RNA sequence: GGGAACGACUCGAGUAGAGUCGAAAACCAAACUACUUCGGUAGUUUGGAAAUAUAAGCUCAAAAGCGAAUAAAUAAAAGAGCAAUAACGCAAAAUAAAUAAAAAGCGGAACGUUCGCGUUCCGCAACUCUUAAUCAAAGUUCGCUUUGAUUAAGAGAAAAGAAACAACAACAACAAC
Reactivity to DMS in 0.01 (KOAc 150mM, MgCl2 10mM, bicine 150mM(pH8.5), 24C), signal-to-noise 1, nucleotides 027 to 126: c030c000a010a010a000c000u000a000c010u000u000c130g030g030u000a000g040u000u010u000g000g000a010a060a020u030a100u000a120a140g030c000u010c010a050a080a050a100g010c040g000a060a010u010a080a110a070u010a100a080a130a060g010a030g040c000a100a090u010a100a150c140g000c050a060a040a040a070u000a040a070a130u010a050a040a080a210a120g040c000g000g000a000a000c000g010u010u010c170g020c030g010u000u000c010c000g020c000a010a020
Reactivity to 2A3 in 0.01 (KOAc 150mM, MgCl2 10mM, bicine 150mM(pH8.5), 24C), signal-to-noise 2, nucleotides 027 to 126: c010c000a000a000a020c010u020a010c010u020u050c150g090g010u010a000g010u010u000u000g000g000a000a010a000u070a020u020a020a070g010c010u010c050a130a090a010a010g060c050g080a070a030u130a130a160a030u230a060a100a050a020g050a010g000c020a030a160u110a100a020c050g000c060a100a040a040a200u170a100a090a050u170a050a100a120a020a010g000c000g000g000a000a000c000g000u090u080c240g000c000g100u000u000c010c010g000c000a000a000